[RMDB]
RNA sequence: GGGAACGACUCGAGUAGAGUCGAAAACAUCAAACUUGAACUUUGAAGAAGAAGAAGAGUGCGCAGUGCUAAUAUGUGCUGUAUGCUUUUCUAAAACCAGCGUGCCGACACAAAGCGACGAUAAUUUUAUUACUUUGCCUUUUGUGGAGAUAAGAUGUACCGUUAGAUGAUUCGUCAUCUAACGGUAAAAAGAAACAACAACAACAAC
Reactivity to DMS in 0.01 (KOAc 150mM, MgCl2 10mM, bicine 150mM(pH8.5), 24C), signal-to-noise 2, nucleotides 027 to 156: c010a160u010c020a040a040a060c100u010u000g010a060a140c080u010u000u000g020a120a140g010a110a140g010a130a080g000a060a050g060a020g050u010g010c030g060c010a050g000u000g030c010u000a150a160u010a090u000g050u000g000c030u010g020u000a060u000g010c000u000u000u000u000c000u000a090a070a120a070c030c020a110g000c060g010u000g000c010c010g020a130c040a020c020a030a080a020g000c030g030a020c030g020a080u000a030a050u000u000u000u020a050u010u000a050c050u000u010u000g040c020c030u000u000u000u000g050u000g000g000a080g040a110u000a030a070g020a100u020g000
Reactivity to 2A3 in 0.01 (KOAc 150mM, MgCl2 10mM, bicine 150mM(pH8.5), 24C), signal-to-noise 5, nucleotides 027 to 156: c030a050u100c050a060a020a070c040u120u140g030a080a020c030u140u110u150g050a090a100g020a060a010g030a010a010g010a000a000g010a000g010u030g000c030g000c050a010g010u010g000c000u060a200a200u130a240u300g010u010g000c000u000g010u020a050u140g020c000u020u010u010u000c020u020a040a070a020a050c050c010a010g050c020g080u050g050c020c010g050a030c010a000c000a050a050a010g010c020g050a030c040g080a110u040a070a060u060u160u110u190a070u080u060a070c050u050u070u050g020c020c020u040u120u030u100g060u030g010g040a030g030a010u120a100a030g090a040u200g050

Chemical mapping of a 207-nucleotide RNA with DMS and 2A3. For DMS, 3,412 sequencing reads were counted.